[RMDB]
RNA sequence: GGGAACGACUCGAGUAGAGUCGAAAAGCGCUCCUGAACGUGACUUCAGAAGAGGGGCGCCGACAAGUUAGAUAGUCGAGGCGACAAAUUGGUCAGUCUGGGCUAUCUAACUGACCAAUCGCCGGCGCGUUGAGUCACGUCAACAACCCUCGAGCGAUAUCAGUAGUACUUUCGAGUACUACUGAUAAAAAGAAACAACAACAACAAC
Reactivity to 2A3 in 0.01 (KOAc 150mM, MgCl2 10mM, bicine 150mM(pH8.5), 24C), signal-to-noise 6, nucleotides 027 to 156: g070c040g010c030u010c010c040u040g060a090a010c000g010u000g010a010c010u120u070c260a140g040a240a030g030a170g030g010g040g000c010g000c000c000g010a010c010a030a010g000u010u010a000g000a010u000a000g010u010c120g060a000g010g000c000g000a010c030a060a300a300u250u180g070g020u030c080a090g010u000c030u080g070g000g000c000u000a000u000c000u000a000a000c000u000g000a000c000c050a040a090u080c090g010c030c000g000g000c010g000c030g050u060u090g000a000g000u000c000a000c010g010u020c010a050a090c020a040a070c010c000c000u010c030g010a020g010c030g030a030
Reactivity to DMS in 0.01 (KOAc 150mM, MgCl2 10mM, bicine 150mM(pH8.5), 24C), signal-to-noise 3, nucleotides 027 to 156: g010c030g020c010u000c000c050u010g000a050a000c030g020u010g020a050c020u010u000c110a200g010a150a110g010a110g000g010g000g010c000g030c010c000g030a040c030a140a060g010u000u000a030g010a060u000a020g010u010c010g010a030g050g010c010g010a060c020a110a100a200u000u010g000g020u000c010a100g050u000c010u000g040g010g010c030u010a000u000c000u040a000a000c000u000g000a130c140c100a070a080u010c080g070c020c010g000g030c010g020c120g010u000u000g010a070g010u000c010a010c020g000u000c030a040a060c040a090a110c040c010c000u000c030g010a050g020c040g030a290